An RNA of 207 nucleotides, treated with 2A3 and read out base by base.
The reactions ran in a buffer of 150 mM KOAc, 10 mM MgCl2 and 150 mM bicine (pH 8.5), at 24 C.
For 2A3 the reverse transcriptase was SuperScript II with manganese.
Values cover nucleotides 27 to 156.
RNA sequence: GGGAACGACUCGAGUAGAGUCGAAAAACAUAUUACGAUAUGAUUCAGAUGGUGUCUUACUGGUUCGUACCAAGGGACAUAAUGGUUUCUUGUUUCCAACCAAAGAACAAGUGGCGAGCCCGAAUAAAAAACUGACUGCCGUUCGCGGCAGUCAGAAGAGCAUAACGAUGUUCGCAUCGUUAUGCUCAAAAGAAACAACAACAACAAC
Reactivity to 2A3 in 0.01 (KOAc 150mM, MgCl2 10mM, bicine 150mM(pH8.5), 24C), signal-to-noise 1, nucleotides 027 to 156: a000c010a020u060a040u110u200a020c100g070a050u030a070u220g070a070u070u250c030a020g210a250u080g090g030u020g010u070c040u020u050a070c000u000g020g010u000u140c100g040u170a040c020c000a000a020g010g020g000a010c030a110u130a100a100u140g030g000u010u000u010c000u020u000g000u010u010u000c010c010a080a100c000c000a000a160a000g030a020a080c010a020a020g020u020g020g010c040g020a010g010c020c000c020g010a090a010u160a060a130a000a000a000a000c020u000g000a000c000u000g020c030c010g050u100u050c250g000c010g050g030c000a000g000u000c000a000g000a000a010